[RMDB]
RNA sequence: GGGAACGACUCGAGUAGAGUCGAAAAGAUAUGGAAGCCACUAGUAGCAACAGCAUACGGGUCGGAAACGACCCGUAUGACAUGCUACAUGGCUUCCUAAGUCAAAGUAGUGAGUUCGCUCACUACACAACUUAGAACGGUUCGCCGUUCUAAGUUGAAAAGAAACAACAACAACAAC
Reactivity to 2A3 in 0.01 (KOAc 150mM, MgCl2 10mM, bicine 150mM(pH8.5), 24C), signal-to-noise 2, nucleotides 027 to 126: g000a010u050a020u110g000g010a000a000g000c000c010a050c170u180a120g080u020a000g000c070a060a160c080a210g050c000a030u010a010c000g000g010g010u000c000g020g010a000a050a040c010g010a000c020c030c010g000u020a000u000g000a010c000a020u120g020c000u000a000c010a000u000g000g000c000u010u000c000c000u000a010a010g000u020c030a000a080a190g000u000a000g000u000g020a010g010u040u160c300g080c150u000c000a000c000u020a000c000a010
Reactivity to DMS in 0.01 (KOAc 150mM, MgCl2 10mM, bicine 150mM(pH8.5), 24C), signal-to-noise 5, nucleotides 027 to 126: g000a030u000a220u010g000g000a030a010g000c000c000a020c300u020a160g010u000a010g010c000a090a090c280a160g000c000a000u000a000c010g010g000g020u000c010g040g000a050a020a120c010g010a020c000c000c000g000u010a000u000g010a010c090a170u010g000c010u010a000c000a080u000g000g000c010u000u000c000c000u000a000a080g000u000c020a150a110a180g020u000a010g000u000g000a020g000u000u030c290g010c000u000c000a000c010u000a000c000a200
An RNA of 177 nucleotides, treated with 2A3 and DMS and read out base by base. The 2A3 profile rests on 6,834 reads. For DMS the reverse transcriptase was MarathonRT. Values cover nucleotides 27 to 126. The reactions ran in a buffer of 150 mM KOAc, 10 mM MgCl2 and 150 mM bicine (pH 8.5), at 24 C.